[RMDB]
RNA sequence: GGGAACGACUCGAGUAGAGUCGAAAACUGCGCGUGUGGCAGGAGGGUCGGUGAUGGUCCGGAUCUCUUGUAUUUAGAGAUGGGUUGUCCUGGGUUAGGAUGGUCGUGGAUACUCUGGGGGCGCGUGCGAUAUAUAUAUUUUCGAAUAUAUAUAUCGAAAAGAAACAACAACAACAAC
Reactivity to 2A3 in 0.01 (KOAc 150mM, MgCl2 10mM, bicine 150mM(pH8.5), 24C), signal-to-noise 5, nucleotides 027 to 126: c010u040g010c020g010c020g040u090g020u060g080g000c030a010g000g020a050g030g010g020u050c010g000g020u050g020a120u050g010g020u010c000c000g010g050a010u000c000u000c000u000u030g090u090a160u050u200u090a010g000a000g010a010u050g030g010g000u040u020g000u010c000c010u040g090g000g000u080u090a040g020g020a040u040g020g010u030c010g020u030g030g010a020u030a070c010u000c010u030g020g010g000g020g000c020g000c000g000u010g010
Reactivity to DMS in 0.01 (KOAc 150mM, MgCl2 10mM, bicine 150mM(pH8.5), 24C), signal-to-noise 6, nucleotides 027 to 126: c060u010g010c030g000c040g020u000g010u010g000g020c050a080g000g000a090g000g000g010u010c000g010g010u020g010a090u020g010g010u000c020c020g010g000a070u010c010u000c010u000u010g010u030a080u040u030u020a020g000a030g000a040u010g000g000g000u010u010g000u010c010c050u010g010g010g020u020u030a050g010g010a060u010g010g010u000c050g020u010g010g000a110u020a050c080u010c020u000g000g010g010g020g010c050g010c030g010u010g020

Chemical mapping of a 177-nucleotide RNA with 2A3 and DMS. 2A3 adducts were read by reverse transcription with SuperScript II with manganese. DMS adducts were read by reverse transcription with MarathonRT. Conditions: 150 mM KOAc, 10 mM MgCl2 and 150 mM bicine (pH 8.5), 24 C.